[RMDB]
RNA sequence: GGGAACGACUCGAGUAGAGUCGAAAACAGUGCGUCUCUCAUUGGUGGUAUGGCGCUAGGCGGUUUAACUGCUGCGGUGGCAUUGCCUUUUAGCUAUGCUGUUCAAGCAAGACUUAAUUAUCUUGCCUUACAGACGGAUGUUCUACAGCGCAACCAGCGGUUAGGAAUGGUUCGCCAUUCCUAACCGAAAAGAAACAACAACAACAAC
Reactivity to DMS in 0.01 (KOAc 150mM, MgCl2 10mM, bicine 150mM(pH8.5), 24C), signal-to-noise 1, nucleotides 027 to 156: c040a050g060u000g010c060g010u000c010u010c050u010c120a110u030u010g050g010u000g020g030u000a110u010g050g010c040g000c070u000a060g020g030c030g000g030u000u010u020a010a050c110u000g030c000u000g030c110g020g080u000g000g060c020a040u000u000g020c020c060u000u000u000u000a080g000c020u000a080u000g030c000u010g010u030u000c130a120a070g000c010a020a020g020a000c020u000u000a090a240u000u000a030u000c000u000u000g010c010c010u000u020a200c010a050g020a190c070g020g020a090u000g010u000u000c010u020a110c050a000g000c050g030c050a120a070c050c020a110g000
Reactivity to 2A3 in 0.01 (KOAc 150mM, MgCl2 10mM, bicine 150mM(pH8.5), 24C), signal-to-noise 3, nucleotides 027 to 156: c040a000g040u020g030c010g040u020c010u010c010u040c070a070u060u070g070g000u050g000g000u140a060u080g060g000c030g000c080u050a060g030g050c040g010g080u070u100u210a160a120c030u050g000c010u030g020c040g070g040u040g030g000c010a020u020u110g020c000c000u050u120u040u060a020g000c040u030a020u190g010c010u010g010u080u060c050a030a000g010c000a010a010g010a030c020u070u230a080a050u240u120a030u070c030u010u030g030c020c010u060u070a050c020a050g030a040c030g040g050a030u040g040u090u000c020u050a050c040a040g000c020g000c050a020a100c000c020a040g060
Chemical mapping of a 207-nucleotide RNA with DMS and 2A3. The RNA was probed in 150 mM KOAc, 10 mM MgCl2 and 150 mM bicine (pH 8.5) at 24 C. DMS adducts were read by reverse transcription with MarathonRT. For DMS, 2,295 sequencing reads were counted. The 2A3 profile rests on 1,770 reads. Values are in units of 0.01, from 0 to 300, in steps of 10.